The record gives the reactivity of an RNA of 207 nucleotides to 2A3.

[RMDB]
RNA sequence: GGGAACGACUCGAGUAGAGUCGAAAAAGCACUGGUACGAUACGACGUACCAGUGCAGUCGUUGGGAUGGAACGCAAUUAAAUACAUGUGUGACGUGUAUUUGCGAACGACGUAAUUAUUUUUCAAAAUCACGCUAUCGUGUUCGCACGAUAGCGAACCACUGAGAGUGCUUCGGCACUCUCAGUGGAAAAGAAACAACAACAACAAC
Reactivity to 2A3 in 0.01 (KOAc 150mM, MgCl2 10mM, bicine 150mM(pH8.5), 24C), signal-to-noise 1, nucleotides 027 to 156: a000g000c000a000c000u000g000g030u000a000c000g020a070u020a170c240g070a040c010g040u010a000c010c000a010g000u000g000c000a000g000u000c000g000u000u000g110g020g050a180u100g050g110a170a000c000g030c020a000a000u250u090a130a050a000u020a020c020a010u020g130u000g150u300g260a010c000g000u000g010u000a000u000u040u080g000c000g020a030a020c000g000a000c010g040u010a090a030u120u170a080u000u170u060u040u060c070a150a060a000a090u210c130a050c110g010c000u000a000u030c000g000u000g050u020u070c250g030c040a000c010g000a000u000a000g000c000g000a000a000
Values are in units of 0.01, from 0 to 300, in steps of 10.
2A3 is a SHAPE reagent: it acylates the 2'-hydroxyl of flexible nucleotides of all four kinds.
The RNA was probed in 150 mM KOAc, 10 mM MgCl2 and 150 mM bicine (pH 8.5) at 24 C.